[RMDB]
RNA sequence: GGGAACGACUCGAGUAGAGUCGAAAACAAUUGAGCCUCGCACACACACAGACUAAGUCUGACACUGACAGAGCCUAAACCGCUCUGUCAGUGUGCGAGAUAUCGUUCUUAAUGUGAGCAGAGGAAAUCUAUGUAAGAGUUUCGACUCUUACAUAGAAAAAGAAACAACAACAACAAC
Reactivity to 2A3 in 0.01 (KOAc 150mM, MgCl2 10mM, bicine 150mM(pH8.5), 24C), signal-to-noise 6, nucleotides 027 to 126: c020a030a090u100u260g070a050g070c000c000u000c000g010c000a010c000a000c000a000c000a000c010a030g010a010c010u060a150a050g020u000c000u010g020a000c000a000c010u000g000a000c000a000g000a000g010c000c000u060a060a060a050c020c000g010c010u000c000u000g000u000c000a000g000u000g000u000g000c010g050a010g000a000u030a010u030c070g090u210u020c020u040u080a090a070u040g000u010g010a040g010c120a110g030a010g010g000a040a040a020
Reactivity to DMS in 0.01 (KOAc 150mM, MgCl2 10mM, bicine 150mM(pH8.5), 24C), signal-to-noise 9, nucleotides 027 to 126: c050a110a110u010u010g010a170g010c010c000u000c000g010c010a130c020a030c030a030c100a150c300a040g010a010c020u010a100a220g010u000c000u000g000a040c010a010c000u000g000a010c000a010g000a010g010c000c010u010a050a080a130c300c300g000c000u000c000u000g000u000c000a000g000u000g000u000g000c090g010a010g010a020u000a170u010c170g010u010u010c020u000u000a210a130u000g010u000g000a060g020c010a080g020a010g000g000a040a070a080